Structure probing data (2A3 and DMS) for a 207-nucleotide construct.

[RMDB]
RNA sequence: GGGAACGACUCGAGUAGAGUCGAAAAAUGUGCGGCAAAGAAACAUUGUUUAUGCAAAGGCACUUCGCAUUGUGUGCUCAAACAUUGCUUAUUCAAACACGCUUCACAAUGUGCGACAAAGAAACAUAAAACGUUUAGUACUUCGGUACUAAACGAACUAAUACGGUAAGUUCGCUUACCGUAUUAGAAAAGAAACAACAACAACAAC
Reactivity to 2A3 in 0.01 (KOAc 150mM, MgCl2 10mM, bicine 150mM(pH8.5), 24C), signal-to-noise 9, nucleotides 027 to 156: a010u090g020u020g010c040g030g000c050a040a100a070g130a100a140a040c080a120u110u140g040u050u100u050a080u090g020c040a060a070a070g070g000c010a010c000u080u040c050g010c050a040u040u030g010u000g000u010g020c010u040c110a070a130a060c080a110u100u090g020c040u110u120a100u130u160c050a020a070a020c070a010c120g030c010u100u110c020a010c010a020a030u050g010u040g060c030g060a070c070a000a090a030g120a040a090a010c060a020u210a080a080a020a010c000g000u000u000u010a000g000u000a000c000u010u050c230g060g000u000a000c000u010a000a000a000c000g000a000a000
Reactivity to DMS in 0.01 (KOAc 150mM, MgCl2 10mM, bicine 150mM(pH8.5), 24C), signal-to-noise 5, nucleotides 027 to 156: a080u000g020u010g010c040g010g010c110a080a050a130g000a140a070a050c040a070u000u000g010u000u000u000a080u010g030c060a100a110a110g010g010c020a050c000u000u000c140g000c130a120u000u000g020u000g020u000g010c020u010c080a070a070a070c070a060u010u010g010c020u000u000a150u000u000c060a090a110a070c050a050c080g020c070u000u000c080a050c050a060a070u010g030u000g020c050g010a160c080a040a070a130g020a150a070a040c060a090u000a050a050a080a170c010g020u000u000u000a010g010u000a010c010u000u000c300g030g030u000a010c000u000a010a010a010c010g010a020a060
Background:
Reactivities are rounded to 0.1 and cut off at 0 and 3. The data come from the RNA Mapping Database (RMDB), library M2RFPK.